This 170-nucleotide RNA was probed chemically with 2A3 and DMS. The DMS profile rests on 4,503 reads. DMS adducts were read by reverse transcription with MarathonRT.
[RMDB]
RNA sequence: GGGAACGACUCGAGUAGAGUCGAAAAGGUGUAUGUAAGUACACUGAUAUUGAUGUUAAUUCAGCUUUGAAUAUAUGUUUUGACAUACGCGAUAAUUGUUCAUUGGAGAAGUUCAUGUCUACUCCCACUAGCCGCAACUUCGGUUGCGGCAAAAGAAACAACAACAACAAC
Reactivity to 2A3 in 0.01 (KOAc 150mM, MgCl2 10mM, bicine 150mM(pH8.5), 24C), signal-to-noise 4, nucleotides 027 to 129: g040g000u000g010u010a020u000g140u080a100a120g020u020a020c000a000c000u000g010a000u020a010u120u170g040a030u060g040u110u140a100a000u070u000c010a000g090c080u080u080u070g080a060a010u070a010u060a020u140g080u080u060u000u090g050a060c030a030u150a040c090g010c020g110a040u090a200a070u140u030g010u000u010c070a030u030u150g070g050a080g000a050a060g060u060u050c030a030u010g000u010c020u020a010c000u070c020c000c010a020c030u060a030
Reactivity to DMS in 0.01 (KOAc 150mM, MgCl2 10mM, bicine 150mM(pH8.5), 24C), signal-to-noise 2, nucleotides 027 to 129: g040g040u020g170u010a010u010g050u110a020a010g070u030a030c000a080c000u020g040a170u040a060u000u050g020a070u010g040u030u040a060a050u000u000c070a130g010c090u050u040u010g030a050a000u030a080u010a050u030g000u020u010u050u030g010a000c030a070u020a060c210g050c030g020a110u070a100a100u020u050g040u000u010c010a060u000u000g050g010a070g000a050a060g040u000u010c000a040u070g030u050c010u020a030c100u050c010c000c040a050c260u000a060